[RMDB]
An RNA of 207 nucleotides, treated with 2A3 and read out base by base.
RNA sequence: GGGAACGACUCGAGUAGAGUCGAAAAUCUGCAAAACACAGGAGAAAAGUGAUCCCUGUGGCUCCGACCUGCCUUCCUUGGGUCCUGCGGUGCAAAACCAGCUGGGACCGUGUCCCGCCCACCCGAAGGCAGUGUGGGGAACCUUUCCUCCAGGUCAGAAAAUUAGCAUCUUCGGAUGCUAAUUUUCAAAAGAAACAACAACAACAAC
Reactivity to 2A3 in 0.01 (KOAc 150mM, MgCl2 10mM, bicine 150mM(pH8.5), 24C), signal-to-noise 1, nucleotides 027 to 156: u010c020u130g030c060a080a030a080a040c070a020c010a060g040g020a050g090a070a020a090a040g140u140g100a080u020c040c010c020u000g070u110g090g000c020u020c030c020g050a070c020c000u000g000c000c000u000u000c000c020u060u050g050g010g010u020c000c080u070g020c000g000g020u020g000c030a020a090a040a300c020c020a070g000c070u080g030g000g000a000c010c050g010u080g030u000c000c010c010g000c020c010c000a080c030c030c040g000a000a000g000g020c000a000g000u010g020u030g070g000g020g000a020a050c010c020u000u030u040c000c000u010c050c000a030g000g090u050c040a010
The RNA was probed in 150 mM KOAc, 10 mM MgCl2 and 150 mM bicine (pH 8.5) at 24 C.